[RMDB]
RNA sequence: GGGAACGACUCGAGUAGAGUCGAAAAUGUAUUGCUGAAAUGUGAUUUCUCUUGAUUUCAACCUAUCAUAGGACGUUUCUAUAAGAUGCGUAUUUCUUGAGAAUUUAACAUUUACAACCUUUUUAAGGUUGAUUGUGUAGUUCGCUACACAAUCAACAAAAGAAACAACAACAACAAC
Reactivity to 2A3 in 0.01 (KOAc 150mM, MgCl2 10mM, bicine 150mM(pH8.5), 24C), signal-to-noise 2, nucleotides 027 to 126: u100g020u040a100u110u180g070c090u110g070a000a000a020u010g000u010g020a050u020u030u010c000u000c000u000u010g020a030u020u050u150c130a170a070c000c010u090a120u300c090a150u150a080g000g010a010c020g000u000u080u000c050u020a220u020a260a050g000a000u010g000c000g020u010a050u020u020u010c000u010u010g000a000g000a000a000u030u040u030a090a010c000a000u020u020u020a050c020a020a100c010c000u070u100u060u070u260a070a030g120
Reactivity to DMS in 0.01 (KOAc 150mM, MgCl2 10mM, bicine 150mM(pH8.5), 24C), signal-to-noise 3, nucleotides 027 to 126: u000g000u010a080u010u010g010c130u010g020a020a010a010u000g010u000g000a060u000u000u000c000u000c000u000u010g010a020u000u000u000c230a110a170c010c010u000a120u010c160a120u010a030g000g010a110c110g020u000u000u010c020u000a120u020a080a110g020a020u000g000c070g030u000a030u000u000u000c000u000u000g000a030g000a030a010u000u000u000a070a040c010a020u000u000u000a090c040a030a060c030c020u000u000u030u000u010a080a090g010

Annotation:
The data come from the RNA Mapping Database (RMDB), library OK2TST. Chemical mapping of a 177-nucleotide RNA with 2A3 and DMS. For 2A3 the reverse transcriptase was SuperScript II with manganese. For 2A3, 2,763 sequencing reads were counted. The RNA was probed in 150 mM KOAc, 10 mM MgCl2 and 150 mM bicine (pH 8.5) at 24 C. High DMS reactivity at an A or C suggests that its Watson-Crick edge is free.